[RMDB]
RNA sequence: GGGAACGACUCGAGUAGAGUCGAAAAGAUAUGGACCAUGCAGGACAUGUGCCUCGUAUCGGAAACGAUACACGCGAGGCACAACAGCCUGUCAUGGUCCUAAGUCAAAGGCAAGUUCGCUUGCCAAUCGGAUUGAACUCUUCGGAGUUCAAUCCGAAAAAGAAACAACAACAACAAC
Reactivity to DMS in 0.01 (KOAc 150mM, MgCl2 10mM, bicine 150mM(pH8.5), 24C), signal-to-noise 1, nucleotides 027 to 126: g010a060u000a300u000g080g000a000c000c050a000u000g000c000a030g000g040a070c140a180u000g000u000g010c000c020u000c020g000u010a000u000c000g010g000a160a000a240c000g050a080u030a050c100a200c300g010c210g000a020g030g020c000a000c000a080a100c280a080g000c020c000u020g000u020c000a000u000g010g010u000c000c030u000a000a090g010u000c020a140a160a090g000g020c020a000a000g030u000u030c300g020c000u000u000g000c000c000a030a080

Chemical mapping of a 177-nucleotide RNA with DMS. The DMS profile rests on 698 reads. Values cover nucleotides 27 to 126. The RNA was probed in 150 mM KOAc, 10 mM MgCl2 and 150 mM bicine (pH 8.5) at 24 C. It was measured as part of the RMDB library TTRDES.